[RMDB]
RNA sequence: GGGAACGACUCGAGUAGAGUCGAAAAUAGAUACAAGUACUAGAUAAAUCCAAUAAUAAAUAAAUAAUAAAGCACCGAAUGGAAAAUAAAAUAUCUAGUACAAACGAGACCAAGCAAUAUGCAGUUCGCUGCAUAAAAAGAAACAACAACAACAAC
Reactivity to 2A3 in 0.01 (KOAc 150mM, MgCl2 10mM, bicine 150mM(pH8.5), 24C), signal-to-noise 1, nucleotides 027 to 135: u120a000g100a010u170a080c070a120a160g020u000a000c000u010a000g010a000u020a040a110a040u000c000c000a070a040u150a190a040u120a050a150a000u200a130a210a010u170a120a040u150a200a220a110g110c050a060c120c160g030a020a000u080g000g010a060a020a070a040u110a010a050a020a020u060a010u000c000u000a000g000u010a000c010a000a010a010c070g020a050g020a010c000c000a040a000g010c010a030a070u020a010u090g000c000a000g000u010u060c160g010c110u000g000c010a000u110a010a040
An RNA of 155 nucleotides, treated with 2A3 and read out base by base. Conditions: 150 mM KOAc, 10 mM MgCl2 and 150 mM bicine (pH 8.5), 24 C. The data come from the RNA Mapping Database (RMDB), library P90LIB.